Overview
Source: RMDB library OK1LIB, as collected in RNAgym. This 177-nucleotide RNA was probed chemically with DMS and 2A3. The reactions ran in a buffer of 150 mM KOAc, 10 mM MgCl2 and 150 mM bicine (pH 8.5), at 24 C. DMS (dimethyl sulfate) methylates the pairing face of unpaired adenines and cytosines. For 2A3, 27,176 sequencing reads were counted.
RNA sequence: GGGAACGACUCGAGUAGAGUCGAAAAGUAGAUGGCCGUCGGAUAGAUCGUGUCCGAGGGCGUUGCGCCAUAGAACGUCAGGUCCAGAGUCGGAAGCGUCAGAUCCGGGAACCGCGCGAGCAUACCGUACGUUAUUCUGAUUCGUCAGAAUAACGUAAAAAGAAACAACAACAACAAC
Reactivity to DMS in 0.01 (KOAc 150mM, MgCl2 10mM, bicine 150mM(pH8.5), 24C), signal-to-noise 8, nucleotides 027 to 126: g010u020a060g010a060u010g010g020c010c000g010u000c010g000g010a020u010a080g010a120u030c200g010u020g020u000c010c000g010a040g000g010g010c030g000u020u010g010c050g010c050c020a090u020a090g010a070a080c100g020u010c050a070g010g000u010c020c030a070g000a100g020u000c030g000g000a090a070g010c070g010u010c040a040g010a080u000c050c020g000g000g000a100a110c070c040g000c040g000c040g010a090g000c050a080u020a070c040c040g020
Reactivity to 2A3 in 0.01 (KOAc 150mM, MgCl2 10mM, bicine 150mM(pH8.5), 24C), signal-to-noise 9, nucleotides 027 to 126: g080u090a020g020a130u100g180g030c040c040g200u030c010g030g000a010u040a070g270a180u170c110g120u110g020u070c010c000g000a020g030g010g000c000g000u020u040g010c020g010c000c020a080u090a110g080a070a030c040g040u040c050a030g040g000u000c020c010a010g010a020g100u060c030g030g040a060a020g030c010g040u030c020a020g010a060u010c020c010g020g000g020a030a020c010c010g010c010g010c020g030a020g010c020a050u070a110c010c030g030